[RMDB]
RNA sequence: GGGAACGACUCGAGUAGAGUCGAAAAGAUAUGGAUAUAAGUUCUCGAUAAGCUGGUAUCGGAAACGAUACCCAGCUUUUGACGAGAAUUAUAUCCUAAGUCAAAUCGACGAGUUCGCUCGUCGAAAGGCUAUAUACUUGUUCGCAAGUAUAUAGCCAAAAGAAACAACAACAACAAC
Reactivity to DMS in 0.01 (KOAc 150mM, MgCl2 10mM, bicine 150mM(pH8.5), 24C), signal-to-noise 5, nucleotides 027 to 126: g010a020u000a120u000g000g000a010u000a000u000a010a050g010u000u000c000u000c000g010a140u020a010a030g020c000u010g000g000u000a010u000c000g020g000a040a030a060c000g010a010u000a010c190c090c060a000g000c000u000u000u000u000g020a190c140g010a010g010a020a030u000u000a010u000a010u000c000c000u000a010a080g000u000c010a110a140a180u000c010g010a010c000g010a020g010u000u010c300g020c010u010c000g020u000c000g000a010a070a110
Reactivity to 2A3 in 0.01 (KOAc 150mM, MgCl2 10mM, bicine 150mM(pH8.5), 24C), signal-to-noise 5, nucleotides 027 to 126: g020a000u030a010u080g000g010a000u000a000u020a070a110g300u090u010c010u000c020g120a240u070a300a000g000c000u010g000g000u000a000u010c000g000g010a030a010a010c010g000a000u000a010c020c020c000a000g000c000u040u010u040u130g250a160c060g000a000g000a010a000u010u000a000u000a000u000c000c000u000a040a000g020u000c020a010a020a240u060c010g000a000c000g000a000g010u080u080c290g060c120u000c020g000u000c000g020a050a020a010
An RNA of 177 nucleotides, treated with DMS and 2A3 and read out base by base. For 2A3, 17,947 sequencing reads were counted. DMS adducts were read by reverse transcription with MarathonRT.